[RMDB]
RNA sequence: GGGAACGACUCGAGUAGAGUCGAAAACAUGGUACUUUUCGCGUUGCGUAUUUCUGCGGAUUGGUUAUGGAAUCGUUGUGUCUAUUUUCCGAAAUAUCGGUUGUCGGUAUAGAGGAUUAUACGCAAAGGGUAAAACAUACUUCGGUAUGUUUUACCCAAAAGAAACAACAACAACAAC
Reactivity to DMS in 0.01 (KOAc 150mM, MgCl2 10mM, bicine 150mM(pH8.5), 24C), signal-to-noise 2, nucleotides 027 to 126: c040a110u040g010g000u020a050c030u000u000u010u030c000g080c030g000u000u000g000c170g020u000a090u010u030u000c130u030g030c030g000g000a020u000u010g000g000u110u010a020u010g010g060a090a060u000c030g000u020u010g000u030g000u020c100u000a080u010u030u000u000c000c010g020a300a100a020u010a020u020c020g000g020u000u080g000u080c000g010g000u010a000u000a010g000a300g000g000a000u000u000a010u000a010c080g030c070a000a120a040
Reactivity to 2A3 in 0.01 (KOAc 150mM, MgCl2 10mM, bicine 150mM(pH8.5), 24C), signal-to-noise 2, nucleotides 027 to 126: c010a070u020g060g000u160a190c020u000u030u010u060c060g010c000g050u090u050g110c040g110u200a190u040u130u030c010u050g020c020g040g000a010u040u010g100g000u050u200a110u140g000g100a060a090u050c130g040u030u100g000u000g000u020c030u010a010u050u050u000u000c000c010g020a070a080a000u010a000u020c090g070g000u140u260g190u230c030g000g000u030a000u000a030g030a000g000g000a020u030u000a010u000a020c000g000c030a010a110a120

Notes
Source: RMDB library OK1LIB, as collected in RNAgym. The record gives the reactivity of an RNA of 177 nucleotides to DMS and 2A3. The RNA was probed in 150 mM KOAc, 10 mM MgCl2 and 150 mM bicine (pH 8.5) at 24 C. High DMS reactivity at an A or C suggests that its Watson-Crick edge is free.